[RMDB]
RNA sequence: GGGAACGACUCGAGUAGAGUCGAAAAGAUAUGGAAGAGGGUAGACUGAGACUAUUCGGAAACGAACGAAUCUCAAUCUAUGAAGCUCUUCCUAAGUCAAACAUCCGCCAGUUCGCUGGCGGAUGAACUACACGUAGUGCUUCGGCACUACGUGUAGAAAAGAAACAACAACAACAAC
Reactivity to DMS in 0.01 (KOAc 150mM, MgCl2 10mM, bicine 150mM(pH8.5), 24C), signal-to-noise 2, nucleotides 027 to 126: g010a040u010a300u000g000g000a000a010g020a030g010g000g030u010a020g010a020c020u000g020a020g000a020c050u000a250u000u000c000g010g010a090a090a250c030g000a000a020c180g000a060a090u010c000u010c000a030a010u000c000u000a020u010g000a140a200g010c000u000c010u010u000c010c000u000a020a050g010u010c020a050a060a300c020a000u000c010c000g070c010c000a010g020u000u000c300g000c010u000g020g010c050g010g000a000u000g010a020a140
Reactivity to 2A3 in 0.01 (KOAc 150mM, MgCl2 10mM, bicine 150mM(pH8.5), 24C), signal-to-noise 1, nucleotides 027 to 126: g010a030u040a030u210g000g000a020a000g010a020g020g180g010u020a000g000a010c010u010g000a010g010a020c120u090a110u000u010c000g000g010a120a090a160c030g030a070a040c010g080a270a300u000c020u000c000a020a020u020c000u000a080u120g180a160a060g090c000u010c000u010u030c000c010u020a080a000g040u020c060a010a200a070c010a010u000c000c020g000c000c010a030g000u080u170c300g080c200u000g000g000c030g000g000a000u000g000a000a000
The record gives the reactivity of an RNA of 177 nucleotides to DMS and 2A3. The DMS profile rests on 1,172 reads. The RNA was probed in 150 mM KOAc, 10 mM MgCl2 and 150 mM bicine (pH 8.5) at 24 C. Source: RMDB library TTRDEL, as collected in RNAgym. For 2A3 the reverse transcriptase was SuperScript II with manganese. For 2A3, 1,636 sequencing reads were counted.